An RNA of 177 nucleotides, treated with 2A3 and DMS and read out base by base.
The 2A3 profile rests on 883 reads.
2A3 adducts were read by reverse transcription with SuperScript II with manganese.
The RNA was probed in 150 mM KOAc, 10 mM MgCl2 and 150 mM bicine (pH 8.5) at 24 C.
In probing experiments dimethyl sulfate is read out at A N1 and C N3, which are open when not base-paired.
DMS adducts were read by reverse transcription with MarathonRT.

RNA sequence: GGGAACGACUCGAGUAGAGUCGAAAAUGCGGGCCAUCGUGGGCAACUGUUACAUCGAGAUCAUGCCGAUGGGCACCAGGGUCGAGCUGAGCAAGUUGGCCGAUGUGGCAUUGGAUAUCGGCCGCAGCGUGCAACGAUCGUUCGCGAUCGUUGCACGAAAAGAAACAACAACAACAAC
Reactivity to 2A3 in 0.01 (KOAc 150mM, MgCl2 10mM, bicine 150mM(pH8.5), 24C), signal-to-noise 1, nucleotides 027 to 126: u110g020c010g020g010g000c000c010a030u090c060g000u080g000g020g110c050a070a000c040u040g110u030u040a100c030a050u050c070g050a050g030a100u000c040a020u070g100c030c000g120a240u250g010g090g000c000a010c020c090a070g100g010g000u000c000g000a030g000c040u070g020a010g070c030a090a090g000u150u180g130g000c020c010g000a010u020g000u030g030g090c110a070u090u230g060g000a030u010a020u110c020g000g000c040c010g000c010a010g030
Reactivity to DMS in 0.01 (KOAc 150mM, MgCl2 10mM, bicine 150mM(pH8.5), 24C), signal-to-noise 1, nucleotides 027 to 126: u000g000c070g000g000g000c040c060a000u010c090g070u010g050g000g020c020a020a020c150u000g000u000u000a250c020a040u020c030g000a200g000a040u010c140a100u000g010c020c010g000a140u000g000g000g030c060a050c160c100a130g000g000g020u020c030g020a100g000c070u000g000a040g040c110a040a050g000u000u010g020g000c010c000g000a010u000g020u030g000g000c050a150u000u000g000g010a060u000a050u000c020g030g000c000c010g000c100a100g050